Background: This 177-nucleotide RNA was probed chemically with DMS and 2A3. The data come from the RNA Mapping Database (RMDB), library OK2TST. The 2A3 profile rests on 7,125 reads.
RNA sequence: GGGAACGACUCGAGUAGAGUCGAAAAGUUACUCACGGGCCAUGUGGGGGCUACAACUUUGAUAGCCAUCUUUCAGGUCUUCCAAAGGCCAAGUUGUGAGUGCUCUUGGAGGCUCUGGCCCAUCAGGGUAUAGAUCCCUAUUCGUAGGGAUCUAUACAAAAGAAACAACAACAACAAC
Reactivity to DMS in 0.01 (KOAc 150mM, MgCl2 10mM, bicine 150mM(pH8.5), 24C), signal-to-noise 8, nucleotides 027 to 126: g010u010u010a170c020u000c020a090c110g010g010g010c100c090a090u010g020u000g000g010g000g000g000c020u000a010c040a090a190c220u010u010u010g000a120u000a030g010c010c020a120u000c020u000u000u000c080a090g000g010u000c010u000u000c020c030a020a030a050g010g010c000c020a110a090g010u000u010g010u000g000a140g020u010g010c020u000c040u000u000g000g010a060g000g000c020u010c080u000g000g010c010c000c000a100u010c150a090g010g000
Reactivity to 2A3 in 0.01 (KOAc 150mM, MgCl2 10mM, bicine 150mM(pH8.5), 24C), signal-to-noise 6, nucleotides 027 to 126: g010u030u100a080c010u010c030a040c050g050g030g010c030c030a060u130g030u100g080g010g000g010g000c010u020a010c020a100a100c090u270u270u170g090a170u140a000g000c000c010a090u040c040u010u160u060c050a030g000g040u010c000u100u040c020c010a060a020a030g020g000c020c040a050a110g130u240u220g160u150g160a110g010u100g020c000u020c000u030u020g010g000a000g020g000c010u000c080u110g030g000c020c030c000a020u100c060a020g200g030